[RMDB]
RNA sequence: GGGAACGACUCGAGUAGAGUCGAAAAUGUGCCAGCACCUCUACUAUCUGUGUCGCGUUCCAAAGCAAGAGUGCGACCGUAGCGUUGAUGAGACUUGUGUUACGAAAUAGAAGCAAGGCUGGCAAGAGUCGUUCGAGCAAUUCGUUGCUCGAGCGACAAAAGAAACAACAACAACAAC
Reactivity to 2A3 in 0.01 (KOAc 150mM, MgCl2 10mM, bicine 150mM(pH8.5), 24C), signal-to-noise 6, nucleotides 027 to 126: u190g020u030g010c010c000a000g020c020a050c030c010u020c010u030a040c000u020a070u070c080u090g150u050g000u140c000g000c000g010u010u000c020c010a180a070a020g150c090a100a020g010a000g010u010g000c000g000a000c010c010g010u010a010g010c050g090u060u090g070a150u140g020a030g040a040c000u020u040g040u010g070u160u050a040c030g050a050a070a090u130a050g030a030a000g030c040a010a030g030g000c010u000g010g000c010a000a020g040a010
Reactivity to DMS in 0.01 (KOAc 150mM, MgCl2 10mM, bicine 150mM(pH8.5), 24C), signal-to-noise 5, nucleotides 027 to 126: u070g000u010g000c000c000a000g000c010a250c100c030u000c010u020a140c000u000a040u000c120u010g030u050g010u010c000g000c010g050u020u010c000c100a060a090a160g040c270a140a140g000a000g030u010g030c000g010a010c030c010g010u000a010g020c180g010u000u000g030a100u020g050a050g010a300c050u030u000g000u020g000u020u010a090c060g030a110a130a100u030a010g000a040a170g000c120a030a030g000g020c000u000g000g000c010a020a080g000a150